[RMDB]
Source: RMDB library OK2TRN, as collected in RNAgym. Chemical mapping of a 177-nucleotide RNA with DMS and 2A3. For 2A3, 2,245 sequencing reads were counted. For DMS the reverse transcriptase was MarathonRT. Conditions: 150 mM KOAc, 10 mM MgCl2 and 150 mM bicine (pH 8.5), 24 C.
RNA sequence: GGGAACGACUCGAGUAGAGUCGAAAACAAUCUCCGGCGUAUUACGCGGAGCUGCUGAUGGACACCGGCUGCAAGGUCGACGUGUGGGAGACCACGUACCUACACCAGCUGACCGGCGAGCACCCGGAAGAGUCCAAAAUUUCGAUUUUGGACUCUUAAAAGAAACAACAACAACAAC
Reactivity to DMS in 0.01 (KOAc 150mM, MgCl2 10mM, bicine 150mM(pH8.5), 24C), signal-to-noise 4, nucleotides 027 to 126: c110a120a080u010c030u010c010c020g020g030c040g020u000a100u010u000a040c020g010c020g000g000a040g000c170u000g020c080u000g010a240u000g010g000a080c060a110c130c000g000g000c030u000g000c170a110a080g000g010u000c050g000a070c060g000u000g010u000g000g000g000a190g000a180c080c040a040c070g000u000a080c020c020u000a150c060a030c160c050a060g010c020u010g010a130c000c010g010g010c090g000a110g000c050a100c070c020c010g000g000
Reactivity to 2A3 in 0.01 (KOAc 150mM, MgCl2 10mM, bicine 150mM(pH8.5), 24C), signal-to-noise 2, nucleotides 027 to 126: c010a020a090u020c010u000c000c020g280g020c020g050u090a120u300u300a100c010g030c000g030g020a030g000c020u060g000c010u020g020a050u080g050g010a050c060a020c070c020g020g000c010u020g000c030a080a110g010g000u020c040g080a050c030g080u100g020u020g030g000g000a090g020a050c060c000a030c030g030u040a150c000c000u010a030c020a010c040c000a020g050c010u030g050a130c000c000g070g030c010g000a030g000c000a020c010c020c010g000g050